[RMDB]
Conditions: 150 mM KOAc, 10 mM MgCl2 and 150 mM bicine (pH 8.5), 24 C. The record gives the reactivity of an RNA of 177 nucleotides to 2A3 and DMS. For DMS, 2,574 sequencing reads were counted. DMS adducts were read by reverse transcription with MarathonRT. The 2A3 profile rests on 1,092 reads. For 2A3 the reverse transcriptase was SuperScript II with manganese. Values are in units of 0.01, from 0 to 300, in steps of 10. The data come from the RNA Mapping Database (RMDB), library OK1LIB.
RNA sequence: GGGAACGACUCGAGUAGAGUCGAAAAUUUGUCUGCAGUGGUAGCGAUACCGGACGUUGCGGGGUUUUCUUCCACUUGAGGAGCAGUUCGGCAAUCUCGUCAGCGGCGGCGCACAGGGUGGCAAUAAAACUGGUUGAAACUUCGGUUUCAACCAGUUAAAAGAAACAACAACAACAAC
Reactivity to 2A3 in 0.01 (KOAc 150mM, MgCl2 10mM, bicine 150mM(pH8.5), 24C), signal-to-noise 2, nucleotides 027 to 126: u090u050u040g110u000c000u090g040c020a000g000u030g070g030u110a020g070c020g100a070u110a040c000c000g040g010a030c080g020u100u070g000c010g000g000g050g000u000u000u060u140c040u020u000c000c020a070c070u060u230g020a080g020g020a060g040c060a020g110u050u100c010g060g010c030a050a080u050c010u000c080g110u050c010a020g000c010g120g030c030g010g000c040g020c000a020c010a070g020g000g050u070g020g000c020a030a020u090a120a130
Reactivity to DMS in 0.01 (KOAc 150mM, MgCl2 10mM, bicine 150mM(pH8.5), 24C), signal-to-noise 2, nucleotides 027 to 126: u050u000u020g020u000c010u030g000c070a040g000u020g010g010u010a070g020c170g000a140u030a060c050c000g030g020a010c040g020u060u020g010c020g010g030g010g020u010u030u050u010c010u000u070c000c060a180c180u000u040g000a110g040g000a120g010c180a110g020u010u000c080g000g000c070a050a070u010c100u030c030g060u000c050a030g020c030g000g030c030g010g000c040g000c030a050c130a100g020g040g040u010g000g030c060a040a050u020a000a030